[RMDB]
RNA sequence: GGGAACGACUCGAGUAGAGUCGAAAAGGCUGGUGCCGGAGCCGAUACCGGAAUACGAGACCUGAUGUGCGGUCGAAUGCACUGAAGUACGAAAGUACGAAGAGGUCAUACCGAGGACCGAGACUCGAUAUGCUCGGUAGAUGGAGCUUUACAUCAAGGGAUAUUAAAUGUUCGCAUUUAAUAUCCCAAAAGAAACAACAACAACAAC
Reactivity to 2A3 in 0.01 (KOAc 150mM, MgCl2 10mM, bicine 150mM(pH8.5), 24C), signal-to-noise 3, nucleotides 027 to 156: g040g010c010u060g060g070u060g020c000c030g020g000a020g040c090c070g050a050u100a140c000c000g000g030a060a040u230a100c070g030a050g040a150c010c060u110g030a060u130g040u020g000c050g000g000u100c110g060a070a020u150g010c020a020c010u060g060a080a030g010u010a000c010g030a120a050a000g020u010a000c030g040a020a010g050a020g020g000u010c020a000u040a030c030c010g020a000g030g040a000c000c000g000a020g020a070c050u070c130g090a140u060a020u270g040c000u010c010g000g000u010a020g020a010u020g000g030a080g020c040u030u030u090a070c030a030u030c050a070a100
Reactivity to DMS in 0.01 (KOAc 150mM, MgCl2 10mM, bicine 150mM(pH8.5), 24C), signal-to-noise 2, nucleotides 027 to 156: g000g020c020u000g030g030u000g000c000c030g010g020a070g000c000c070g010a130u000a060c010c010g020g000a070a110u010a070c030g000a150g020a120c010c010u050g000a110u000g040u000g000c040g000g010u000c040g030a100a110u000g000c030a030c020u020g000a150a210g000u000a040c020g030a240a120a220g040u000a030c040g000a080a150g000a120g020g010u000c000a110u000a070c030c020g000a090g000g020a200c030c030g000a120g000a120c070u000c050g020a100u000a100u000g000c050u000c010g010g000u000a030g010a100u010g010g000a130g000c030u000u000u000a060c070a110u010c020a070a300
Structure probing data (2A3 and DMS) for a 207-nucleotide construct. 2A3 adducts were read by reverse transcription with SuperScript II with manganese. The data come from the RNA Mapping Database (RMDB), library OK3TST. For 2A3, 1,583 sequencing reads were counted. The RNA was probed in 150 mM KOAc, 10 mM MgCl2 and 150 mM bicine (pH 8.5) at 24 C.